The record gives the reactivity of an RNA of 177 nucleotides to 2A3. The RNA was probed in 150 mM KOAc, 10 mM MgCl2 and 150 mM bicine (pH 8.5) at 24 C. For 2A3 the reverse transcriptase was SuperScript II with manganese. Source: RMDB library OK1LIB, as collected in RNAgym.

RNA sequence: GGGAACGACUCGAGUAGAGUCGAAAACGCGAUGGUCGCGCUGCUGUGGGUCCUCAACAAGUUUGAGGUCAUCGUCGUCCCGGUGUUGCUGGCGCUGAUGUUGAGUGCGUUGCUGGUGCCGCCGGUGGACCGUGUUUGCUUUCGAGCAAACACGGUCAAAAGAAACAACAACAACAAC
Reactivity to 2A3 in 0.01 (KOAc 150mM, MgCl2 10mM, bicine 150mM(pH8.5), 24C), signal-to-noise 2, nucleotides 027 to 126: c030g040c040g010a070u090g090g000u090c070g010c000g030c080u110g030c020u080g000u070g020g110g000u100c000c000u000c000a010a000c050a040a070g110u010u050u120g010a000g000g000u000c060a040u080c030g170u000c000g000u000c000c000c010g030g000u000g000u020u030g010c010u020g030g000c000g000c030u050g070a190u100g070u150u140g060a070g060u100g010c050g100u190u140g000c020u000g030g100u050g000c010c000g000c000c010g010g010u060g100